[RMDB]
RNA sequence: GGGAACGACUCGAGUAGAGUCGAAAACGACGGGUCUUCGGACCCGUCGAAAUAAUGCGUAGCUCGCGCUACGCAGGCAUCGAGUAGGUCGAGCCACCUUCAAAAGCUUCGAGUUCGCUCGAAGCAACGUAUAGUGAAGGUUCGCCUUCACUAUACGAAAAGAAACAACAACAACAAC
Reactivity to 2A3 in 0.01 (KOAc 150mM, MgCl2 10mM, bicine 150mM(pH8.5), 24C), signal-to-noise 8, nucleotides 027 to 126: c010g010a000c000g010g000g000u000c010u050u090c240g110g000a000c000c000c000g010u000c000g000a000a010a000u110a020a040u060g000c010g000u000a000g010c040u040c150g130c030g000c050u000a000c000g000c000a000g010g000c010a230u050c020g030a030g040u210a090g150g300u060c010g010a000g010c020c010a040c020c010u140u180c090a070a080a030a070g000c000u010u000c000g010a010g030u060u100c200g050c080u000c000g000a000a000g000c000a000a000
Reactivity to DMS in 0.01 (KOAc 150mM, MgCl2 10mM, bicine 150mM(pH8.5), 24C), signal-to-noise 6, nucleotides 027 to 126: c030g000a010c000g010g010g020u000c000u000u010c240g020g000a010c000c000c010g020u000c000g000a010a040a050u010a100a110u000g000c010g020u010a010g000c000u010c300g000c300g000c000u000a000c000g010c000a010g020g000c070a080u000c020g010a020g000u000a130g010g010u000c010g010a100g000c010c020a120c060c040u010u000c150a060a090a110a110g000c010u000u000c000g010a020g010u000u020c200g020c010u000c000g010a020a010g010c010a010a020